[RMDB]
RNA sequence: GGGAACGACUCGAGUAGAGUCGAAAAACAUGCUGGCCAACCCAACCCCACGAUCCUCCAUCGGCAAGAUCAUGAUGUGUUCUCAAAUAUCAGGCCAGUAAAUCACCAUGCUCGUGCUGGUAAAGGCAACUUAUGCCCAAGUUCGCUUGGGCAUAAAGAUAGUAGGGAGGUUCGCCUCCCUACUAUCAAAAGAAACAACAACAACAAC
Reactivity to 2A3 in 0.01 (KOAc 150mM, MgCl2 10mM, bicine 150mM(pH8.5), 24C), signal-to-noise 3, nucleotides 027 to 156: a000c050a030u110g000c010u000g000g000c020c000a020a030c040c040c020a020a060c030c010c000c040a030c060g060a110u070c000c000u050c030c020a040u030c020g010g010c020a040a010g010a030u010c010a030u050g020a050u080g030u000g050u100u010c070u030c020a070a100a010u200a100u070c060a050g000g000c000c010a000g000u020a000a030a010u090c020a020c020c000a030u060g000c010u020c020g040u060g010c020u020g000g010u060a090a130a050g000g000c010a000a030c030u030u000a000u000g010c030c000c000a030a000g030u030u060c080g010c160u000u000g040g000g010c000a000u000a010a000a000
Reactivity to DMS in 0.01 (KOAc 150mM, MgCl2 10mM, bicine 150mM(pH8.5), 24C), signal-to-noise 2, nucleotides 027 to 156: a070c030a070u020g000c020u010g020g000c020c030a110a170c100c070c030a080a180c040c020c020c010a070c080g010a090u000c020c000u010c030c040a100u000c050g080g050c080a030a050g000a080u000c030a060u000g010a050u020g010u010g000u020u010c040u000c030a070a070a170u000a080u010c040a110g000g060c000c010a060g010u000a010a060a070u020c000a010c030c000a000u040g030c110u000c030g010u000g000c000u000g040g030u010a010a070a070g030g020c050a080a080c050u000u000a000u000g010c000c000c010a010a020g030u000u010c300g010c010u010u000g010g000g000c010a010u000a000a030a130